[RMDB]
RNA sequence: GGGAACGACUCGAGUAGAGUCGAAAAGUUUGAGACAAACGUGGACGCGACGCGAAGGUUUGUCAUAGACCGGGGAUUCUCCACCUUCGGGUGGUACACCUGUACCGCCGCGAUACCGCGAGAUAAUUCCGCCAGGGACUCGUGGACGGACUUAGAAACAGUACCUGACAUUCGUGUCAGGUACUGUAAAAGAAACAACAACAACAAC
Reactivity to 2A3 in 0.01 (KOAc 150mM, MgCl2 10mM, bicine 150mM(pH8.5), 24C), signal-to-noise 1, nucleotides 027 to 156: g080u070u060u100g110a050g000a020c040a020a040a020c070g070u070g040g040a060c050g090c090g090a070c090g000c000g070a050a000g030g000u050u030u020g090u030c030a020u130a000g070a000c010c010g000g090g000g000a010u160u020c090u040c060c010a030c000c000u020u010c060g010g000g000u000g000g000u010a050c060a030c020c040u010g020u050a050c000c000g000c000c000g010c010g010a010u030a050c010c010g010c020g000a020g000a150u140a040a070u160u000c000c010g000c090c080a070g000g000g130a090c030u000c050g030u010g010g000a050c000g010g000a000c010u110u170a040g050a070a180
Reactivity to DMS in 0.01 (KOAc 150mM, MgCl2 10mM, bicine 150mM(pH8.5), 24C), signal-to-noise 1, nucleotides 027 to 156: g010u000u000u000g010a150g000a080c000a070a050a020c030g030u010g040g030a170c040g060c020g050a050c050g010c030g000a240a150g020g010u000u000u000g010u000c090a110u010a080g000a050c050c000g030g020g000g020a180u000u000c030u000c020c050a080c030c050u030u000c090g000g010g010u010g000g090u000a030c030a140c160c110u010g000u010a060c030c000g000c010c000g000c060g020a060u000a080c000c010g010c020g000a060g000a180u010a070a140u000u000c010c030g030c060c100a180g000g000g030a100c030u030c030g040u000g010g000a180c030g000g010a130c060u000u040a100g000a260a070